[RMDB]
RNA sequence: GGGAACGACUCGAGUAGAGUCGAAAAAUGACCAAGUGAUGGCUAAAUCAUAAAUUUGCUUGGUUAAUGGUUUAGUUAAACAUGGAUAUAAUGUGUUCCAAUCAAUGAUAGACAAAUCAUAACUCAAACGUAAUUAGGUGUUCGCACCUAAUUACGUAAAAGAAACAACAACAACAAC
Reactivity to 2A3 in 0.01 (KOAc 150mM, MgCl2 10mM, bicine 150mM(pH8.5), 24C), signal-to-noise 8, nucleotides 027 to 126: a010u180g040a010c010c010a030a000g040u030g070a090u220g070g040c060u070a040a080a080u080c050a070u120a120a110a180u120u120u170g100c090u080u130g060g050u050u090a050a010u040g010g010u030u020u030a080g010u000u050a080a050a010c030a030u050g020g030a030u050a030u050a230a170u210g110u050g040u100u020c030c010a020a050u130c090a080a100u080g020a030u060a100g180a090c060a030a080a010u040c020a030u050a160a070c030u030c190a080a150
Reactivity to DMS in 0.01 (KOAc 150mM, MgCl2 10mM, bicine 150mM(pH8.5), 24C), signal-to-noise 4, nucleotides 027 to 126: a010u050g000a080c010c030a020a020g000u000g000a140u050g010g010c000u010a000a020a010u020c050a020u010a040a060a100u000u030u040g000c160u020u010g010g010u000u010a070a000u000g000g000u000u000u010a020g020u010u010a130a140a060c000a080u000g010g000a060u020a050u020a120a080u030g010u010g020u010u000c010c000a060a060u040c200a060a020u020g010a050u000a090g010a120c230a050a070a040u000c020a010u010a100a090c160u000c130a080a100

About this RNA:
Source: RMDB library OK1LIB, as collected in RNAgym. This 177-nucleotide RNA was probed chemically with 2A3 and DMS. The reactions ran in a buffer of 150 mM KOAc, 10 mM MgCl2 and 150 mM bicine (pH 8.5), at 24 C. The 2A3 profile rests on 6,166 reads. 2A3 adducts were read by reverse transcription with SuperScript II with manganese. Values cover nucleotides 27 to 126.